[RMDB]
The record gives the reactivity of an RNA of 207 nucleotides to 2A3 and DMS. Conditions: 150 mM KOAc, 10 mM MgCl2 and 150 mM bicine (pH 8.5), 24 C. For DMS the reverse transcriptase was MarathonRT. Source: RMDB library OK3TST, as collected in RNAgym.
RNA sequence: GGGAACGACUCGAGUAGAGUCGAAAAUUGGUGAUAUUGCUAUUCUUAAAGGUGAACCUAAUAUUAUGAGAUUAGUAACACCGCCUUUGAAUACAGACCCUGAGAACCUACAAUUAGGUACUGUAACAGUAUUACCUGAUUCUAACGAAGCAGUAUGGAGUAACAGAGUUUUCGAACUCUGUUACUCAAAAGAAACAACAACAACAAC
Reactivity to 2A3 in 0.01 (KOAc 150mM, MgCl2 10mM, bicine 150mM(pH8.5), 24C), signal-to-noise 3, nucleotides 027 to 156: u080u050g000g000u040g000a030u050a040u040u030g010c040u040a040u040u050c020u060u180a020a000a030g020g000u030g020a030a030c000c000u020a050a030u060a090u300u170a190u280g110a140g020a100u000u030a010g070u040a180a010c030a020c050c010g010c000c000u030u050u020g030a020a000u040a010c020a020g010a010c000c000c040u030g020a060g030a050a050c020c010u070a080c100a130a100u100u060a070g000g000u020a060c000u010g040u100a080a030c010a020g030u030a070u090u050a010c020c020u040g020a090u130u040c000u050a050a100c100g070a110a010g080c040a000g010u060a070u160g100
Reactivity to DMS in 0.01 (KOAc 150mM, MgCl2 10mM, bicine 150mM(pH8.5), 24C), signal-to-noise 2, nucleotides 027 to 156: u020u020g030g010u000g030a020u000a040u000u030g010c050u000a050u020u000c040u000u000a070a100a080g020g010u000g000a300a190c300c010u010a020a020u010a070u010u000a150u000g040a210g020a040u000u000a000g000u010a070a050c010a030c030c000g000c010c010u000u000u000g010a030a180u000a080c080a080g000a150c080c000c010u010g000a130g000a070a110c020c000u000a120c110a050a160u000u000a020g030g000u000a040c110u000g020u000a150a110c020a140g020u000a140u010u020a010c040c030u000g050a070u000u000c050u000a090a060c170g020a050a130g020c000a080g020u010a160u000g000